RNA sequence: GGGAACGACUCGAGUAGAGUCGAAAAGCAGCAAUCGACGUCGGGGCAAAAUACGGUCAUAAGAUGAUCGAAUUUGACGCGAAGUUAUCGAAAGAUGGCGAGAUCUUCCUGCUCCAUGACGACAAUCGUAACUAGGGUACUUCGGUACCCUAGUUACAAAAGAAACAACAACAACAAC
Reactivity to 2A3 in 0.01 (KOAc 150mM, MgCl2 10mM, bicine 150mM(pH8.5), 24C), signal-to-noise 3, nucleotides 027 to 126: g080c020a010g020c060a000a180u120c070g090a060c000g050u030c020g010g010g020g000c000a010a000a010a010u090a010c000g040g000u000c010a010u080a200a180g180a220u070g000a010u020c000g000a010a040u010u020u060g090a060c070g020c070g060a050a000g030u080u090a030u040c030g050a100a060a080g140a070u130g080g020c020g040a030g050a080u010c000u030u030c020c010u010g000c000u000c000c020a090u190g010a000c000g000a020c030a030a090u170c100
Reactivity to DMS in 0.01 (KOAc 150mM, MgCl2 10mM, bicine 150mM(pH8.5), 24C), signal-to-noise 2, nucleotides 027 to 126: g010c090a050g030c110a080a100u040c100g040a100c050g040u000c010g000g030g000g010c070a090a030a000a030u000a120c000g020g010u000c000a050u020a030a160g020a300u010g000a020u000c020g050a100a050u000u000u000g000a030c160g000c140g000a040a050g000u010u010a030u000c020g000a110a110a110g000a030u010g000g020c020g010a080g000a150u000c050u000u000c060c030u000g000c030u010c040c050a130u010g030a050c020g030a060c100a000a120u030c160